[RMDB]
The data come from the RNA Mapping Database (RMDB), library OK1LIB. An RNA of 177 nucleotides, treated with 2A3 and read out base by base.
RNA sequence: GGGAACGACUCGAGUAGAGUCGAAAACUCUUGGGAUUAUGAGCAAUUUUGAAUAUCCUUUAGCUCAUACUGUGGCCGCGUUGCUCACAGGCAGCUAUACAAUCACCCAAUUUACUCACAACGGGCAACUCGGUGUCGUUUUCGAACGACACCGAGUAAAAGAAACAACAACAACAAC
Reactivity to 2A3 in 0.01 (KOAc 150mM, MgCl2 10mM, bicine 150mM(pH8.5), 24C), signal-to-noise 1, nucleotides 027 to 126: c000u000c000u010u010g140g000g020a010u000u000a000u010g010a000g000c180a080a100u050u080u090u150g070a090a050u010a130u020c040c000u200u150u110a010g000c000u000c020a000u150a080c000u000g000u010g010g020c000c000g090c070g080u170u100g000c010u000c120a000c000a000g020g000c030a000g000c030u060a000u000a010c100a070a050u030c020a070c000c000c000a000a010u160u050u240a010c010u010c050a020c000a120a130c170g000g000g020c010a040
For 2A3, 624 sequencing reads were counted. For 2A3 the reverse transcriptase was SuperScript II with manganese.